[RMDB]
RNA sequence: GGGAACGACUCGAGUAGAGUCGAAAAUAUGCCGACCACGGCGCUCCAGGCAUCUUGGGCAUGCCCAACGGCGCUUUCCUGUACGCGGAUCAGCUUCUGUCAGUGCUGACCGCCAAGAGCGAGCAGGCCUAUUAAGGCCGUUCGCGGCCUUAAUAGGAAAAGAAACAACAACAACAAC
Reactivity to 2A3 in 0.01 (KOAc 150mM, MgCl2 10mM, bicine 150mM(pH8.5), 24C), signal-to-noise 9, nucleotides 027 to 126: u190a060u080g020c010c010g050a120c020c060a080c070g020g000c010g010c020u030c020c030a030g010g000c020a060u040c050u170u170g100g070g040c060a040u090g010c000c010c010a060a050c050g040g000c010g000c010u040u070u030c010c000u040g020u050a040c060g010c010g020g090a300u020c010a010g010c000u140u090c050u280g300u190c080a090g060u020g100c010u000g010a010c000c000g000c000c000a020a010g010a010g040c020g010a020g010c020a020g010g070
Reactivity to DMS in 0.01 (KOAc 150mM, MgCl2 10mM, bicine 150mM(pH8.5), 24C), signal-to-noise 9, nucleotides 027 to 126: u010a080u010g010c010c020g000a200c090c100a120c160g010g010c010g010c020u000c080c280a120g000g000c040a030u000c040u000u000g010g010g010c100a060u000g010c000c010c040a050a110c270g000g010c030g010c050u000u000u000c020c010u000g010u000a100c200g000c000g010g000a160u000c010a010g000c010u000u000c130u000g010u010c190a100g010u000g010c010u000g000a020c000c010g010c010c080a030a070g000a080g010c020g010a240g010c040a080g010g000